[RMDB]
The record gives the reactivity of an RNA of 177 nucleotides to 2A3 and DMS.
Source: RMDB libraries RFM100 and RFMREP, as collected in RNAgym.

RNA sequence: GGGAACGACUCGAGUAGAGUCGAAAAACAACUCGACAUGGUCUGCUUUGGAAAUCUCUAGUGUUUACGUUGCGAAAACAAUUGAAAUCAUAACAAUAAAAUCAAAUUCGAAAUUUGCGAGCGGUGGCAAAUGCUCUAUCUUCGGAUAGAGCAUUUGAAAAGAAACAACAACAACAAC
Reactivity to 2A3 in 0.01 (KOAc 150mM, MgCl2 10mM, bicine 150mM(pH8.5), 24C), signal-to-noise 3, nucleotides 027 to 126: a000c050a020a070c040u040c060g020a010c010a100u050g050g070u020c010u020g020c020u080u010u030g010g020a060a080a100u000c030u000c020u000a060g040u030g030u120u020u050a060c030g040u000u010g080c030g050a010a010a030a070c100a040a080u060u070g030a090a060a000u140c070a070u140a120a010c050a060a160u150a130a150a020a040u120c040a060a090a000u110u040c000g000a030a050a090u070u090u060g040c000g010a020g020c000g010g020u040g020g010
Reactivity to DMS in 0.01 (KOAc 150mM, MgCl2 10mM, bicine 150mM(pH8.5), 24C), signal-to-noise 3, nucleotides 027 to 126: a080c150a110a080c070u000c060g020a090c090a080u010g010g010u000c020u000g000c030u000u000u000g000g010a030a080a050u010c010u000c030u000a060g020u010g000u020u000u000a060c070g010u010u010g000c030g000a040a060a060a110c090a070a060u010u000g000a060a070a060u020c060a040u010a080a090c110a040a080u010a020a060a070a050u020c040a010a070a080u010u030c080g020a050a070a080u010u010u010g010c070g000a060g000c030g010g020u000g010g000
Record summary:
Conditions: 150 mM KOAc, 10 mM MgCl2 and 150 mM bicine (pH 8.5), 24 C.